The record gives the reactivity of an RNA of 177 nucleotides to DMS and 2A3. For DMS the reverse transcriptase was MarathonRT. It was measured as part of the RMDB library RFM100. Reactivities are given for positions 27 through 126.
[RMDB]
RNA sequence: GGGAACGACUCGAGUAGAGUCGAAAACCAGGGUUAUCUCACAACCUCAGAUGCUGGAUAAGUCGACGGAGGCAGAAUCGCUUUGGGAUGACAUUCAGAAAGCCUGGAGUGAUUACUUGCAAGAGAAGUUACAAGUGACCUUCGGGUCACUUGUAACAAAAGAAACAACAACAACAAC
Reactivity to DMS in 0.01 (KOAc 150mM, MgCl2 10mM, bicine 150mM(pH8.5), 24C), signal-to-noise 2, nucleotides 027 to 126: c000c000a160g000g000g000u000u000a070u000c040u120c050a080c160a040a010c000c030u010c040a180g010a060u000g000c080u020g020g050a030u060a120a030g000u000c120g000a110c110g000g000a140g000g010c010a090g000a050a000u000c020g020c060u000u030u020g000g010g050a050u000g010a300c160a100u020u050c150a160g000a060a130a100g050c000c000u000g040g000a000g020u000g000a020u000u000a090c020u030u010g030c070a030a040g000a120g000a080a030
Reactivity to 2A3 in 0.01 (KOAc 150mM, MgCl2 10mM, bicine 150mM(pH8.5), 24C), signal-to-noise 3, nucleotides 027 to 126: c010c000a040g060g000g020u070u060a070u130c030u020c020a040c020a050a060c000c010u050c010a010g060a060u080g020c050u030g010g030a040u050a200a050g080u060c020g020a050c030g040g000a010g110g000c020a000g030a010a000u020c020g000c020u000u010u010g000g030g000a030u130g090a150c040a130u150u110c040a090g150a110a110a020g040c020c000u010g010g000a000g000u000g000a010u000u050a170c020u010u130g000c010a100a000g040a010g040a220a080